The data come from the RNA Mapping Database (RMDB), library TTRINS. This 177-nucleotide RNA was probed chemically with DMS.
RNA sequence: GGGAACGACUCGAGUAGAGUCGAAAAGAUAUGGAGCGAACUACAGCGUAACCAGGACGUUGAAAUAGUAGAGGCUCGGAAACGAGCCUCUACUAUGGAGUCCUGGGAGAAGCUGCGCUCCUAAGUCCUAGGAACUAGAGUUCGCUCUAGUUCCUAGAAAAGAAACAACAACAACAAC
Reactivity to DMS in 0.01 (KOAc 150mM, MgCl2 10mM, bicine 150mM(pH8.5), 24C), signal-to-noise 1, nucleotides 027 to 126: g010a100u000a290u010g000g040a030g020c010g010a090a110c260u030a300c010a000g000c010g000u000a240a280c010c000a010g000g010a010c010g000u000u010g010a150a160a000u000a000g000u010a040g010a050g010g020c000u000c000g020g000a020a110a300c000g000a010g000c010c000u000c010u010a000c000u000a000u000g000g000a140g010u000c010c010u000g000g030g000a060g000a070a240g010c000u000g000c060g030c000u010c000c000u000a010a060g020u000c040
For DMS, 1,025 sequencing reads were counted. The RNA was probed in 150 mM KOAc, 10 mM MgCl2 and 150 mM bicine (pH 8.5) at 24 C.